Conditions: 150 mM KOAc, 10 mM MgCl2 and 150 mM bicine (pH 8.5), 24 C. This 207-nucleotide RNA was probed chemically with 2A3 and DMS. For 2A3 the reverse transcriptase was SuperScript II with manganese. For 2A3, 2,976 sequencing reads were counted. Values are in units of 0.01, from 0 to 300, in steps of 10. DMS adducts were read by reverse transcription with MarathonRT.
RNA sequence: GGGAACGACUCGAGUAGAGUCGAAAAUUAGAGAUAUGCCUUCAGCAGGGACGCCAAGCGCCUCAGCUCCUUGAAGAUCAGAGGAGGAUAUUGCUGUGACCUGCUUUCUCAGGGAGUAGGAAUGCCCUCCCAAGGAUGUGAAAGGGGUGGGAGCUGAAUGGAUUAAUGAGUUCGCUCAUUAAUCCAUAAAAGAAACAACAACAACAAC
Reactivity to 2A3 in 0.01 (KOAc 150mM, MgCl2 10mM, bicine 150mM(pH8.5), 24C), signal-to-noise 4, nucleotides 027 to 156: u090u070a030g020a020g040a090u040a060u180g020c010c000u050u060c030a020g000c010a030g040g000g020a010c030g010c040c050a120a020g050c050g030c040c010u040c030a050g020c010u020c000c000u010u010g050a080a020g070a140u050c060a040g080a170g090g010a000g000g010a000u000a030u030u040g120c020u020g010u020g030a040c000c000u010g040c080u070u150u060c130u010c020a020g000g030g000a020g010u030a010g010g050a070a010u020g010c000c000c000u020c000c000c010a010a040g170g010a020u060g040u020g240a130a050a020g010g000g000g010u030g000g030g000a040g000c010u030g040a060
Reactivity to DMS in 0.01 (KOAc 150mM, MgCl2 10mM, bicine 150mM(pH8.5), 24C), signal-to-noise 2, nucleotides 027 to 156: u000u000a070g000a130g000a100u010a030u010g020c020c030u010u020c040a080g040c050a140g020g020g010a050c040g010c020c080a110a130g000c040g010c010c000u000c020a190g000c000u000c010c000u000u000g000a220a150g010a080u010c060a120g020a090g000g000a020g040g000a060u010a030u000u000g020c040u000g010u000g000a300c010c000u000g020c160u000u010u020c100u000c020a030g020g010g000a300g020u010a010g000g000a060a060u010g000c010c010c010u000c000c000c030a160a150g000g030a030u000g020u010g020a150a070a080g000g000g020g020u000g000g000g000a070g000c020u010g020a140